Structure probing data (DMS and 2A3) for a 207-nucleotide construct. For DMS the reverse transcriptase was MarathonRT.

[RMDB]
RNA sequence: GGGAACGACUCGAGUAGAGUCGAAAACAUGGUGGCAAGUACGACGCGAUAUUGCCCCACCUGCAAUAGAAGCGUAGACAUCAACUGUAGCGAGAGCUACUCAACUUAUGGACCUUAGAGCAUGCGAAGACGACCGGUCCUGUCGGAAUUCGCUAGAACUGCAGUACUAUUUCGAUAGUACUGCAGUAAAAGAAACAACAACAACAAC
Reactivity to DMS in 0.01 (KOAc 150mM, MgCl2 10mM, bicine 150mM(pH8.5), 24C), signal-to-noise 3, nucleotides 027 to 156: c080a090u010g000g000u000g120g070c040a070a100g000u020a100c040g030a060c020g000c010g010a260u000a070u010u000g010c000c050c020c210a050c060c040u010g000c000a050a070u020a040g000a100a290g010c020g040u000a080g020a130c080a100u000c090a030a080c060u000g010u010a020g020c010g000a300g020a300g020c000u000a050c010u000c080a080a110c050u010u000a080u000g000g010a070c040c020u000u000a140g010a120g030c040a090u020g010c050g070a050a130g020a200c050g010a090c010c020g030g010u000c030c030u000g010u000c010g030g000a090a180u000u000c020g010c080u010a130g020a140
Reactivity to 2A3 in 0.01 (KOAc 150mM, MgCl2 10mM, bicine 150mM(pH8.5), 24C), signal-to-noise 5, nucleotides 027 to 156: c070a040u090g010g020u050g050g010c040a050a020g090u080a080c090g020a010c010g090c010g050a050u010a020u070u020g010c010c030c000c010a050c010c040u060g030c010a020a050u030a070g100a120a020g020c000g000u020a040g050a090c020a070u100c040a040a070c060u080g000u040a010g000c010g020a030g010a010g050c010u020a030c010u020c040a040a140c040u120u140a070u130g020g040a030c000c030u050u100a050g000a020g090c050a070u120g010c010g000a000a020g030a060c030g010a010c000c030g020g060u050c000c010u000g000u010c010g000g030a110a050u030u010c010g010c030u030a040g030a120
The reactions ran in a buffer of 150 mM KOAc, 10 mM MgCl2 and 150 mM bicine (pH 8.5), at 24 C. Values are in units of 0.01, from 0 to 300, in steps of 10. 2A3 adducts were read by reverse transcription with SuperScript II with manganese.